[RMDB]
RNA sequence: GGGAACGACUCGAGUAGAGUCGAAAAAGUGAACUCCUCAUAGCAUCUUCUUUGGAAUUACUCAGGAACCAGAACUUUUUACACAAAUGUAAGAAAUUCUACCAAGGAGUCCCCUUACCUAACAGCAUACACACGGGCUAUUCGUAGCCCGUGUGUAAAAAGAAACAACAACAACAAC
Reactivity to 2A3 in 0.01 (KOAc 150mM, MgCl2 10mM, bicine 150mM(pH8.5), 24C), signal-to-noise 1, nucleotides 027 to 126: a000g010u090g050a000a010c000u000c010c000u000c000a030u090a000g030c020a030u040c010u000u010c070u070u160u100g070g000a100a050u300u050a110c070u020c110a090g010g140a110a020c080c000a050g030a140a070c120u000u060u000u170u130a000c190a000c070a180a270a020u300g040u120a050a000g000a000a050a000u040u010c000u000a000c000c000a000a080g010g000a000g000u000c000c000c000c000u060u130a050c000c000u000a030a000c000a040g190c000a010